[RMDB]
RNA sequence: GGGAACGACUCGAGUAGAGUCGAAAACAUCUCUUAACAUGAAGUUACAGAAUAUUACCGUGAAUAUCGCGAGCUACGAAUAUUUUGGGUGGGGAGAUAUUUAUUCAUGAUUAGCCUUGUCCUAUAGGGAGAACCAUAAAUUCGUUUAUGGUUCUCCAAAAGAAACAACAACAACAAC
Reactivity to 2A3 in 0.01 (KOAc 150mM, MgCl2 10mM, bicine 150mM(pH8.5), 24C), signal-to-noise 3, nucleotides 027 to 126: c020a060u000c030u000c000u100u060a060a020c020a080u080g110a120a040g040u050u140a080c020a050g070a040a020u050a010u100u080a070c010c050g020u030g060a070a030u200a040u140c050g020c040g030a030g070c080u080a050c060g060a100a040u010a050u060u080u080u070g080g040g010u080g020g010g050g000a060g010a020u060a040u030u100u070a110u030u050c030a030u050g050a130u040u030a010g000c010c020u010u010g000u050c030c000u130a060u200a120g080
Reactivity to DMS in 0.01 (KOAc 150mM, MgCl2 10mM, bicine 150mM(pH8.5), 24C), signal-to-noise 4, nucleotides 027 to 126: c080a030u010c020u000c020u000u000a030a060c040a070u000g010a070a080g030u000u010a120c150a070g010a080a020u000a040u000u000a130c060c030g000u010g000a050a060u000a030u000c030g010c070g000a130g020c110u000a070c120g000a070a060u000a030u000u000u000u000g010g030g020u000g000g010g020g020a090g000a030u000a010u000u000u010a060u020u000c040a050u000g000a080u000u000a050g000c010c020u000u000g020u000c010c020u000a110u010a110g020